[RMDB]
RNA sequence: GGGAACGACUCGAGUAGAGUCGAAAACUCAGCAGUUUACACCUGCUAGGGUGUUCAAAGGUCAGUGCUAUAGAAAUUCAGUAUCUGGCAUCGUUGGUUUUCUUGGCUUUGUGCUUGUUAAACCUGGCAUCGAAUGUGACUUCGGUCACAUUCGAUGAAAAGAAACAACAACAACAAC
Reactivity to DMS in 0.01 (KOAc 150mM, MgCl2 10mM, bicine 150mM(pH8.5), 24C), signal-to-noise 2, nucleotides 027 to 126: c010u000c030a030g030c000a010g000u000u000u080a100c250a130c300c000u020g000c020u000a120g000g000g000u000g010u000u020c090a030a050a150g000g010u000c010a000g040u040g000c030u000a110u020a050g000a070a040a150u010u000c090a020g010u000a030u040c010u000g000g030c020a080u040c090g040u000u000g000g000u010u020u000u000c010u000u030g020g010c030u010u040u030g030u020g020c070u000u000g000u000u000a030a050a050c060c000u000g010g010
Reactivity to 2A3 in 0.01 (KOAc 150mM, MgCl2 10mM, bicine 150mM(pH8.5), 24C), signal-to-noise 1, nucleotides 027 to 126: c020u020c020a000g030c000a020g040u020u020u080a080c100a000c000c000u050g010c020u120a200g100g000g020u020g070u040u090c210a260a030a000g050g000u010c000a000g000u040g040c000u020a050u000a080g200a230a110a110u100u110c010a020g000u020a160u150c010u000g000g070c000a000u040c040g160u120u100g110g040u020u010u040u160c030u060u080g000g040c020u140u000u010g000u110g000c130u030u030g000u030u110a010a060a000c000c040u020g040g000